[RMDB]
RNA sequence: GGGAACGACUCGAGUAGAGUCGAAAAUAGCGGAUAGACCAACUCGCCGCCGUCGCCAAGCGCAGCCGGCUGUACAACAUCAGGUUCCCGAACUCCGGCUCACGCGUGAGGUCAUAGGGAUCCUCGCAUUUACUAUGGUGUUCGCACCAUAGUAAAUAAAAGAAACAACAACAACAAC
Reactivity to 2A3 in 0.01 (KOAc 150mM, MgCl2 10mM, bicine 150mM(pH8.5), 24C), signal-to-noise 9, nucleotides 027 to 126: u100a010g020c020g020g020a040u070a090g070a120c030c030a050a100c030u020c060g020c010c000g010c010c010g070u070c020g010c010c020a070a020g020c020g000c030a010g010c010c010g040g000c090u040g030u090a090c070a160a030c020a160u160c060a030g040g040u020u020c020c000c000g000a040a020c010u010c020c000g020g000c030u020c030a080c070g040c010g020u060g030a030g010g010u030c020a050u170a070g080g010g010a030u060c000c000u010c020g050c010
Reactivity to DMS in 0.01 (KOAc 150mM, MgCl2 10mM, bicine 150mM(pH8.5), 24C), signal-to-noise 9, nucleotides 027 to 126: u010a100g010c030g000g010a050u020a060g010a130c040c070a150a110c080u010c070g010c020c020g010c010c040g000u010c080g000c020c030a080a170g010c050g040c200a050g000c030c020g010g010c130u000g000u020a060c180a060a110c170a070u030c080a080g010g000u010u000c000c000c000g010a080a080c060u000c020c010g000g000c030u010c140a080c110g000c050g010u020g000a150g000g000u000c060a120u020a110g000g000g000a070u020c010c000u010c030g020c100